Description
An RNA of 177 nucleotides, treated with DMS and read out base by base. Reactivities are given for positions 27 through 126. The DMS profile rests on 1,017 reads. Conditions: 150 mM KOAc, 10 mM MgCl2 and 150 mM bicine (pH 8.5), 24 C.

[RMDB]
RNA sequence: GGGAACGACUCGAGUAGAGUCGAAAAGAUAUGGAAGCGAUGAGUACUGUAUGUGGACAUGCUCAAACAGUCGGAAACGACUGGUAGAGCAACAGCCACAUACAGUACUCCGCUCGCUUCCUAAGUCCUUGUGAGGAUACUUCGGUAUCCUCACAAGAAAAGAAACAACAACAACAAC
Reactivity to DMS in 0.01 (KOAc 150mM, MgCl2 10mM, bicine 150mM(pH8.5), 24C), signal-to-noise 1, nucleotides 027 to 126: g010a180u010a300u000g000g010a000a020g000c000g030a000u010g000a080g000u020a000c000u000g020u000a000u000g000u000g000g000a040c080a200u000g030c000u000c010a060a140a300c010a020g000u000c020g000g030a090a110a240c020g020a010c000u000g000g000u000a250g000a000g000c010a030a040c280a120g010c000c000a000c000a020u000a000c000a000g000u000a000c000u040c010c040g000c060u010c010g000c000u000u000c010c000u010a010a140g000u000c000